Chemical mapping of a 177-nucleotide RNA with 2A3 and DMS. It was measured as part of the RMDB library OK2TST. For DMS, 1,785 sequencing reads were counted. For 2A3, 2,188 sequencing reads were counted. High 2A3 reactivity points to a flexible backbone, as in loops and unpaired stretches. The RNA was probed in 150 mM KOAc, 10 mM MgCl2 and 150 mM bicine (pH 8.5) at 24 C.

[RMDB]
RNA sequence: GGGAACGACUCGAGUAGAGUCGAAAAGCUCACCUACACUGAUGACACCCCGCCGGACUAUGAGCCACCAUACUUCCGCAAGCUGGAGGACGCAGAUGCCAGCCACUUCUCUUCUCGGCCAUUUGCCGCAAGAACACUGUUUCGACAGUGUUCUUGCAAAAGAAACAACAACAACAAC
Reactivity to 2A3 in 0.01 (KOAc 150mM, MgCl2 10mM, bicine 150mM(pH8.5), 24C), signal-to-noise 2, nucleotides 027 to 126: g020c010u010c060a080c000c020u020a040c080a010c100u090g060a110u120g020a050c010a060c050c000c000c010g010c040c020g030g000a020c030u060a050u260g010a020g060c020c010a030c040c000a030u030a110c040u040u010c030c000g030c000a070a030g000c030u040g030g010a030g000g020a040c030g000c050a000g020a110u110g020c030c040a010g030c000c000a040c000u110u040c060u010c000u090u000c000u000c000g040g030c020c020a080u070u080u080g080c030c040
Reactivity to DMS in 0.01 (KOAc 150mM, MgCl2 10mM, bicine 150mM(pH8.5), 24C), signal-to-noise 2, nucleotides 027 to 126: g000c020u000c040a060c070c040u000a090c100a080c100u010g000a050u010g000a140c120a130c040c010c040c020g020c060c040g000g010a090c300u000a090u000g000a060g000c030c010a090c020c060a020u010a080c090u000u000c020c000g020c100a070a110g000c060u000g010g000a120g000g010a070c100g010c070a060g010a130u010g000c030c000a020g010c050c060a100c020u010u000c020u000c040u000u000c030u010c040g010g010c010c080a070u000u000u000g010c040c060